Structure probing data (2A3) for a 207-nucleotide construct.

[RMDB]
RNA sequence: GGGAACGACUCGAGUAGAGUCGAAAAGGGCAUCGAGGGCGGCGCCGAGCAGGGAGCCGAGCAGGGAAGCGGCGCCCUCGCCGCGUUCGGAUGGGCCGCCGUCGGGGCCGCCGUUGGAGCAGCGCUCAUGGUCGGCAUCUCCGAGGCUAUGCAGCAAUCUCAUAACAGUAUUCGUACUGUUAUGAGAAAAAGAAACAACAACAACAAC
Reactivity to 2A3 in 0.01 (KOAc 150mM, MgCl2 10mM, bicine 150mM(pH8.5), 24C), signal-to-noise 2, nucleotides 027 to 156: g040g010g010c010a030u030c040g000a000g040g010g010c010g010g020c060g040c020c020g000a040g020c040a030g020g000g020a010g020c020c010g030a020g030c130a090g030g050g030a080a020g010c000g030g000c000g060c000c000c010u050c060g050c020c020g120c110g060u060u060c020g020g030a070u060g070g130g010c010c010g000c010c000g090u000c000g000g000g030g000c000c000g000c000c000g040u030u140g030g040a070g030c080a020g050c040g000c060u020c010a040u060g000g030u060c030g000g050c030a080u040c040u000c060c040g020a030g000g010c020u020a010u060g020c000a030g000c000a010a090